[RMDB]
RNA sequence: GGGAACGACUCGAGUAGAGUCGAAAAGAUAUGGAGCGUCGAGCUCUUGGAUUUAAACAUUAGGGACAACCAUAUCGGAAACGAUAUGGAUCCCUAAUGUUUUGUCAGAGCUCGUCGCUCCUAAGUCGUCUAGUAUACUCUUCGGAGUAUACUAGACAAAAGAAACAACAACAACAAC
Reactivity to DMS in 0.01 (KOAc 150mM, MgCl2 10mM, bicine 150mM(pH8.5), 24C), signal-to-noise 1, nucleotides 027 to 126: g010a050u010a270u010g020g000a000g000c010g030u000c000g010a010g030c000u010c020u000u000g040g000a010u010u020u000a010a010a010c000a000u000u000a020g000g000g000a010c040a130a060c000c000a020u000a000u010c000g000g000a160a150a240c000g010a000u000a000u010g000g000a050u000c000c000c000u010a000a000u010g000u000u010u000u000g000u000c010a030g010a020g010c000u000c000g000u000c000g020c000u000c000c000u000a000a030g020u010c180
Reactivity to 2A3 in 0.01 (KOAc 150mM, MgCl2 10mM, bicine 150mM(pH8.5), 24C), signal-to-noise 1, nucleotides 027 to 126: g080a040u150a030u300g000g000a010g000c000g010u010c000g000a010g030c010u000c010u020u100g000g010a050u300u300u300a030a020a000c020a000u000u000a020g000g010g040a010c000a090a080c100c010a000u010a000u000c010g000g010a180a000a010c000g000a010u000a000u000g000g010a010u000c010c000c000u000a000a000u000g000u000u000u000u010g010u000c010a000g020a000g000c010u010c030g000u000c000g000c000u010c000c000u000a000a000g020u020c050